Record summary:
Structure probing data (2A3 and DMS) for a 177-nucleotide construct.
[RMDB]
RNA sequence: GGGAACGACUCGAGUAGAGUCGAAAACGUUGUCCGGAAUUACUGGGCGUAAAGAGUUCGUAGGCGGUUUGUCGCGUCGUUUGUGAAAACCCGGGGCUCAACUUCGGGCUUGCAGGCGAUACGGGCAAAUAAUUUUGAUUUUCGAAUCAAAAUUAUUAAAAGAAACAACAACAACAAC
Reactivity to 2A3 in 0.01 (KOAc 150mM, MgCl2 10mM, bicine 150mM(pH8.5), 24C), signal-to-noise 7, nucleotides 027 to 126: c040g020u040u080g030u010c010c010g020g070a140a090u140u070a130c050u130g000g030g000c030g010u070a060a140a040g110a030g030u050u110c030g010u060a030g050g080c030g000g020u020u070u060g020u030c010g000c000g050u000c000g000u000u020u020g020u000g060a050a030a020a030c000c000c000g000g000g000g000c050u070c250a090a120c040u050u030c000g000g000g000c020u010u050g000c000a000g000g000c000g000a000u020a040c000g000g000g010c000a020
Reactivity to DMS in 0.01 (KOAc 150mM, MgCl2 10mM, bicine 150mM(pH8.5), 24C), signal-to-noise 8, nucleotides 027 to 126: c100g010u020u010g020u010c010c010g000g000a200a120u020u030a050c040u030g020g010g000c010g010u040a050a080a120g010a140g010u000u010c020g010u010a050g000g010c040g010g000u010u010u000g010u000c010g010c010g000u000c010g010u000u010u000g010u000g000a040a040a090a200c010c010c020g000g000g000g000c130u060c300a090a230c020u000u000c010g010g000g020c070u000u000g010c000a020g000g000c010g010a040u010a030c020g010g010g000c010a020

For DMS, 30,886 sequencing reads were counted. Reactivities are given for positions 27 through 126.